[RMDB]
Notes:
Chemical mapping of a 177-nucleotide RNA with 2A3 and DMS. For DMS, 17,090 sequencing reads were counted. 2A3 is a SHAPE reagent: it acylates the 2'-hydroxyl of flexible nucleotides of all four kinds. For 2A3, 18,965 sequencing reads were counted.
RNA sequence: GGGAACGACUCGAGUAGAGUCGAAAACAAGUGGUAAUCCAUUGAGUGGUAAGACUAUAUAUUUCUACUACAGUACAGAUGGUUCUACGUGGAUUUUUCUAACUAGUGCAACUACUGACAGCGGUGGGGCUAAAAAUGAAUUCGUUCAUUUUUAGCCAAAAGAAACAACAACAACAAC
Reactivity to 2A3 in 0.01 (KOAc 150mM, MgCl2 10mM, bicine 150mM(pH8.5), 24C), signal-to-noise 9, nucleotides 027 to 126: c050a050a060g020u020g040g050u130a060a060u100c020c010a030u060u080g060a060g040u020g030g020u070a250a050g030a070c100u020a020u040a050u020a060u300u110u020c020u010a020c000u010a020c020a040g080u080a060c020a070g090a070u040g070g000u060u000c010u030a030c050g030u040g040g060a080u030u060u040u080u060c040u040a070a140c020u030a050g070u030g120c020a060a020c020u070a020c020u090g100a070c030a050g050c030g040g030u060g010g040
Reactivity to DMS in 0.01 (KOAc 150mM, MgCl2 10mM, bicine 150mM(pH8.5), 24C), signal-to-noise 7, nucleotides 027 to 126: c060a100a090g010u010g000g010u010a080a090u030c020c020a020u010u010g010a140g020u000g000g010u010a040a060g030a030c300u020a100u020a110u020a090u010u010u000c020u010a050c000u000a020c050a100g010u010a100c170a150g000a030u010g000g010u010u000c010u010a030c090g020u010g000g000a060u010u010u010u010u010c040u020a060a070c100u000a030g000u020g000c090a040a040c050u010a040c040u000g010a070c100a080g020c060g000g010u010g000g000